RNA sequence: GGGAACGACUCGAGUAGAGUCGAAAAGAUAUGGAUCCUGUGAGAGUGAUGACCUCGGAAACGAGCAAGCUCACACACAUGGAUCCUAAGUCAAAGGAGGACAAGGCCUUCGGGCCUUGUCCUCCAAGAGUUAAUAACAGUUCGCUGUUAUUAACUCAAAAGAAACAACAACAACAAC
Reactivity to DMS in 0.01 (KOAc 150mM, MgCl2 10mM, bicine 150mM(pH8.5), 24C), signal-to-noise 2, nucleotides 027 to 126: g010a030u020a300u010g010g000a000u000c000c010u000g000u000g020a190g030a160g000u010g000a050u020g000a280c300c000u010c010g000g010a120a170a190c010g000a030g010c020a060a180g000c150u000c010a000c040a160c020a030c060a000u060g000g010a020u010c000c000u010a000a120g010u000c020a060a060a160g000g000a030g020g000a060c020a000a050g020g020c000c020u000u030c110g010g000g000c000c000u040u000g010u000c000c000u000c000c000a000a020
Structure probing data (DMS) for a 177-nucleotide construct. In probing experiments dimethyl sulfate is read out at A N1 and C N3, which are open when not base-paired. Source: RMDB library TTRDEL, as collected in RNAgym. Conditions: 150 mM KOAc, 10 mM MgCl2 and 150 mM bicine (pH 8.5), 24 C.